[RMDB]
RNA sequence: GGGAACGACUCGAGUAGAGUCGAAAAACCUUUGUGUCUAUCGAGUGUUAGCAAGGAUCGAGAAACUCUUACCCAUUGGGUAAGAGGAGAUCUGAUGACCUAACACUAAGACAGUAGACACUCUGGUAAAACCCUGCGCACUUCGGUGCGCAGGGAACAGAAAAACAACCUUCGGGUUGUUUUUCUGAAAAGAAACAACAACAACAAC
Reactivity to 2A3 in 0.01 (KOAc 150mM, MgCl2 10mM, bicine 150mM(pH8.5), 24C), signal-to-noise 2, nucleotides 027 to 156: a020c000c000u010u040u020g000u000g000u000c010u010a050u170c010g050a010g000u010g020u010u000a020g030c060a180a300g080g010a050u030c050g010a060g240a300a110a080c010u000c000u010u010a000c000c020c100a300u130u300g000g000g000u000a000a000g000a000g000g000a030g000a000u000c020u040g010a180u080g090a150c000c000u000a000a000c000a000c000u010a020a040g050a050c090a020g020u010a000g010a000c000a010c000u000c010u000g060g000u000a100a080a090a110c000c000c010u010g050c030g040c000a040c030u090u100c300g100g020u010g000c000g000c000a010g070g000g010a020a020